[RMDB]
RNA sequence: GGGAACGACUCGAGUAGAGUCGAAAAGCGUGCAACAGUCACGGUAGAUAAGAACAACUUUGAAGCCGUAAUGCGCGAGAGCGAGCUGAAAAUCACCGCCACGGUGAAAAACAAGCUGACUGAUGAAGAUUUAUUACGGAUUCGUCCGUAAUAAAUCAAAAGAAACAACAACAACAAC
Reactivity to 2A3 in 0.01 (KOAc 150mM, MgCl2 10mM, bicine 150mM(pH8.5), 24C), signal-to-noise 6, nucleotides 027 to 126: g010c010g020u060g020c030a100a060c020a090g060u060c030a020c020g000g020u020a010g000a010u020a020a010g050a190a090c090a090a130c070u000u010u020g010a010a010g000c000c000g010u040a040a050u090g030c020g000c020g000a040g010a010g070c080g020a000g000c010u000g030a030a020a010a070u020c000a010c020c000g170c200c090a100c140g000g000u010g010a090a010a000a010a010c040a040a010g010c010u020g030a040c020u040g030a090u110g080a090a090
Reactivity to DMS in 0.01 (KOAc 150mM, MgCl2 10mM, bicine 150mM(pH8.5), 24C), signal-to-noise 8, nucleotides 027 to 126: g030c040g010u000g010c060a110a130c060a050g000u000c060a050c030g000g000u000a010g010a180u000a010a020g010a200a180c290a110a130c020u000u000u000g000a300a210g010c000c000g020u010a080a110u000g010c010g010c020g000a110g020a100g000c030g000a060g020c010u000g000a060a060a140a180u000c010a010c000c010g000c200c180a080c120g010g020u000g010a000a020a050a070a080c080a110a040g010c010u000g010a030c020u000g010a110u000g000a090a110